[RMDB]
The record gives the reactivity of an RNA of 177 nucleotides to DMS and 2A3.
RNA sequence: GGGAACGACUCGAGUAGAGUCGAAAACGUCUUCGUGUGAAACGUCGUGCUCUUCUGCACGAGGGUGGUCAAGAAUGCGUCAACACCCUUUUCUUGACGCAACGAAGCAAUCUCGACGUUUGAAAGACGGAGCAUAGUAUUUCGAUACUAUGCUCCGAAAAGAAACAACAACAACAAC
Reactivity to DMS in 0.01 (KOAc 150mM, MgCl2 10mM, bicine 150mM(pH8.5), 24C), signal-to-noise 6, nucleotides 027 to 126: c100g000u010c020u000u000c030g050u000g000u010g010a080a070a080c020g010u000c000g020u000g010c090u010c300u000u010c160u000g010c020a040c030g000a040g000g000g010u010g010g000u010c060a040a070g010a090a050u000g010c140g010u000c060a050a070c210a120c200c040c080u020u010u000u010c060u000u000g010a040c020g020c050a110a050c100g010a060a040g010c170a080a080u010c040u000c030g010a070c080g000u000u010u000g010a070a070a080g010a160
Reactivity to 2A3 in 0.01 (KOAc 150mM, MgCl2 10mM, bicine 150mM(pH8.5), 24C), signal-to-noise 4, nucleotides 027 to 126: c040g040u020c020u020u040c020g020u060g020u040g170a120a060a050c030g110u020c000g010u020g000c000u040c010u300u090c100u140g020c010a010c030g000a010g000g040g010u150g020g060u040c020a030a020g050a060a030u070g030c040g060u050c040a050a060c030a130c110c000c000u020u060u030u040c020u000u030g000a000c000g000c060a010a020c040g030a010a010g040c030a060a110u040c010u010c040g070a050c020g010u030u050u110g160a140a070a010g050a020

Values cover nucleotides 27 to 126. The RNA was probed in 150 mM KOAc, 10 mM MgCl2 and 150 mM bicine (pH 8.5) at 24 C.